This 177-nucleotide RNA was probed chemically with DMS. The RNA was probed in 150 mM KOAc, 10 mM MgCl2 and 150 mM bicine (pH 8.5) at 24 C. The DMS profile rests on 744 reads.
RNA sequence: GGGAACGACUCGAGUAGAGUCGAAAAUUAGCAAAAGAUCGCGAGAGUGGUCGUUUUAGAGGAUUUGCUUUCGUAGAGAUGAGCAAUAGUGAUGAGGCAUCUAGAGCAAUUGCGGCAUUGGAUGGACCCUGUAGAAUCCCUUCGGGGAUUCUACAGGAAAAGAAACAACAACAACAAC
Reactivity to DMS in 0.01 (KOAc 150mM, MgCl2 10mM, bicine 150mM(pH8.5), 24C), signal-to-noise 1, nucleotides 027 to 126: u000u020a130g020c030a060a150a150a110g000a040u000c010g000c000g020a170g000a060g040u020g000g000u000c010g000u000u000u010u010a120g030a140g010g020a090u000u000u030g000c010u000u000u000c030g030u000a140g020a100g020a020u000g010a190g010c000a110a070u020a070g010u000g010a070u000g000a050g010g000c020a030u000c060u000a120g000a070g010c000a050a150u010u000g040c110g010g030c000a050u000u010g000g010a090u010g000g000a180c130